The data come from the RNA Mapping Database (RMDB), library OK1LIB. An RNA of 177 nucleotides, treated with 2A3 and DMS and read out base by base. Values cover nucleotides 27 to 126.

RNA sequence: GGGAACGACUCGAGUAGAGUCGAAAACGAUGCGUACUCCGGUGAUAUUGGUGGCAGGUCAGGAUCACACCGACGAGGUGACGGGCGCCUUGUUGCGCCGGACCGGAACGGUGGUCGUGGAGCACCGCAUCACGUCAUAUUUCGAUAUGACGUGAUGAAAAGAAACAACAACAACAAC
Reactivity to 2A3 in 0.01 (KOAc 150mM, MgCl2 10mM, bicine 150mM(pH8.5), 24C), signal-to-noise 9, nucleotides 027 to 126: c030g040a060u130g020c030g030u060a050c030u010c020c010g000g050u050g040a100u050a090u200u120g060g010u040g040g030c050a040g040g050u050c030a020g030g050a060u060c020a010c010a010c080c020g110a140c070g040a100g020g020u030g070a110c060g050g020g020c020g000c000c010u100u250g130u170u180g020c000g000c000c000g000g010a010c010c000g010g020a060a020c020g010g020u040g010g050u050c040g070u070g030g020a030g020c020a010c020c020g010
Reactivity to DMS in 0.01 (KOAc 150mM, MgCl2 10mM, bicine 150mM(pH8.5), 24C), signal-to-noise 9, nucleotides 027 to 126: c060g000a040u020g000c040g020u010a070c050u010c000c020g010g010u010g010a050u020a070u030u010g020g020u000g000g010c050a060g000g010u020c020a090g000g010a080u020c060a140c030a040c020c000g010a090c070g000a300g010g010u000g000a110c030g010g000g000c010g010c010c030u030u010g010u060u020g010c020g010c000c000g000g010a040c020c010g010g010a090a090c040g000g010u000g000g000u010c040g010u000g000g010a070g000c070a070c040c050g010
The reactions ran in a buffer of 150 mM KOAc, 10 mM MgCl2 and 150 mM bicine (pH 8.5), at 24 C. For 2A3 the reverse transcriptase was SuperScript II with manganese.